[RMDB]
RNA sequence: GGGAACGACUCGAGUAGAGUCGAAAAAUCAGGUCUUAUCAAGUGAUGUUAUGUUUGAAGAUGCCCAAGGUUUGAAAAAGUUCUACAAAGAAGUUAGAGCUUACCUAGGAAUCUCUUCUGCUUGUGAAUACGUCCGCGUUCGCGCGGACGAAAAGAAACAACAACAACAAC
Reactivity to DMS in 0.01 (KOAc 150mM, MgCl2 10mM, bicine 150mM(pH8.5), 24C), signal-to-noise 2, nucleotides 027 to 129: a120u010c100a040g060g030u010c150u060u030a070u000c030a050a000g020u040g170a110u020g030u040u000a020u050g020u190u010u010g010a030a040g000a070u030g000c260c000c030a000a000g030g000u020u210u010g120a040a050a160a070a000g040u000u020c000u000a050c080a130a170a070g030a140a030g120u060u000a020g000a000g000c000u070u070a000c010c010u000a110g060g000a130a050u030c210u000c050u060u010c030u010g030c080u100u000g040u000g100a080a160u030a000
Reactivity to 2A3 in 0.01 (KOAc 150mM, MgCl2 10mM, bicine 150mM(pH8.5), 24C), signal-to-noise 1, nucleotides 027 to 129: a000u150c000a000g140g020u050c000u110u000a110u170c010a030a000g000u020g210a000u000g040u170u010a070u000g180u040u060u000g040a100a000g000a000u120g000c000c000c000a000a000g000g000u000u170u300g070a040a000a000a000a000g050u000u000c000u000a010c000a000a190a000g090a120a040g000u140u000a030g010a070g000c020u000u000a000c000c000u000a000g000g000a060a000u000c000u000c000u010u000c000u000g070c000u000u040g000u000g000a150a040u080a070
This 170-nucleotide RNA was probed chemically with DMS and 2A3. Conditions: 150 mM KOAc, 10 mM MgCl2 and 150 mM bicine (pH 8.5), 24 C.